[RMDB]
RNA sequence: GGGAACGACUCGAGUAGAGUCGAAAAAUUAACUUUAAUUAAAUCACACACAUUUCGUCACAUGUUCCGGGGUGCUUGAGUAAUCAUUCAUACCAAGUCGGAUUCAUGGGAAAUGUGGAGGCCUAACCGAGCGUAUUCGGUUCGCCGAAUACGCUCGAAAAGAAACAACAACAACAAC
Reactivity to 2A3 in 0.01 (KOAc 150mM, MgCl2 10mM, bicine 150mM(pH8.5), 24C), signal-to-noise 2, nucleotides 027 to 126: a000u120u130a000a100c000u120u110u140a070a030u070u120a130a130a110u300c000a000c000a000c000a000c000a050u000u000u000c150g080u130c120a060c030a300u000g000u000u060c000c000g010g000g160g060u300g000c010u040u020g050a110g130u010a000a130u050c090a030u290u140c000a000u080a130c000c010a080a000g300u280c010g010g000a000u000u020c000a000u000g030g000g000a000a000a000u000g000u000g000g000a000g010g000c000c000u000a010a010c050